Structure probing data (DMS and 2A3) for a 177-nucleotide construct. DMS adducts were read by reverse transcription with MarathonRT. The 2A3 profile rests on 2,535 reads. Values cover nucleotides 27 to 126. The RNA was probed in 150 mM KOAc, 10 mM MgCl2 and 150 mM bicine (pH 8.5) at 24 C.

[RMDB]
RNA sequence: GGGAACGACUCGAGUAGAGUCGAAAAUGUGGUAGUGUUGGUUACACCAAGGAGGGUAGUGUGAUCAAUUUCUGUUACAUGCAUCAAAUGGAACUUGCUAAUGGUACACAUACCGGUUCAGCAUUUGCGAUCAAUGCUGCUUCGGCAGCAUUGAUCGAAAAGAAACAACAACAACAAC
Reactivity to DMS in 0.01 (KOAc 150mM, MgCl2 10mM, bicine 150mM(pH8.5), 24C), signal-to-noise 1, nucleotides 027 to 126: u000g020u000g000g020u000a010g000u000g010u000u000g000g010u000u000a040c020a040c010c070a100a190g020g030a130g020g000g000u010a150g000u000g030u000g000a010u000c010a010a010u010u010u000c000u030g020u000u000a010c010a020u030g000c110a130u010c090a020a050a100u000g010g000a020a010c060u000u010g010c060u000a090a060u010g010g000u000a080c280a060c160a020u020a060c060c030g000g000u020u000c040a020g000c000a020u010u000u000g010
Reactivity to 2A3 in 0.01 (KOAc 150mM, MgCl2 10mM, bicine 150mM(pH8.5), 24C), signal-to-noise 2, nucleotides 027 to 126: u020g000u010g030g000u020a030g000u010g000u000u010g000g010u010u010a010c010a010c040c030a070a070g170g040a050g060g090g000u070a050g010u000g000u010g020a020u000c000a010a010u120u220u100c020u010g020u010u010a010c000a000u010g020c010a050u050c030a050a030a040u080g080g000a020a030c010u040u040g030c020u100a120a040u080g010g030u120a050c130a000c000a090u060a040c020c000g000g040u030u000c030a020g050c020a070u020u020u050g030